[RMDB]
RNA sequence: GGGAACGACUCGAGUAGAGUCGAAAAGAUAUGGAGGACUAUGACAUGUCGGUCGGAAACGAUGGCCGACAACAGCAUACUCCUCCUAAGUCAAACCUUAGAAGCAGCUUCGGCUGCUUCUAAGGAAGUUAAGUACACUGUUCGCAGUGUACUUAACAAAAGAAACAACAACAACAAC
Reactivity to 2A3 in 0.01 (KOAc 150mM, MgCl2 10mM, bicine 150mM(pH8.5), 24C), signal-to-noise 6, nucleotides 027 to 126: g030a010u080a030u180g000g000a010g000g000a010c010u010a030u030g040a140c030a080u070g000u010c000g010g010u010c040g100g140a280a300a090c190g120a170u300g030g000c010c020g010a000c010a010a020c010a000g000c000a010u000a010c020u010c000c010u000c010c000u010a090a010g020u010c040a070a050a150c000c000u000u000a000g000a010a000g000c010a000g010c010u110u170c300g210g000c000u010g010c010u000u010c000u000a000a000g000g000a010a000
Reactivity to DMS in 0.01 (KOAc 150mM, MgCl2 10mM, bicine 150mM(pH8.5), 24C), signal-to-noise 5, nucleotides 027 to 126: g000a030u010a300u010g000g010a010g010g020a010c090u010a000u000g000a040c080a220u000g000u000c010g020g020u000c000g000g000a100a150a130c250g010a140u010g000g010c000c000g000a000c010a010a030c220a100g000c000a010u000a010c180u000c000c010u000c000c000u000a010a080g010u010c030a140a130a220c010c000u000u000a000g000a020a000g020c000a010g000c000u000u010c220g020g000c000u000g000c000u000u000c000u000a010a000g000g000a010a020
An RNA of 177 nucleotides, treated with 2A3 and DMS and read out base by base. The 2A3 profile rests on 14,934 reads. It was measured as part of the RMDB library TTRDEL. 2A3 adducts were read by reverse transcription with SuperScript II with manganese.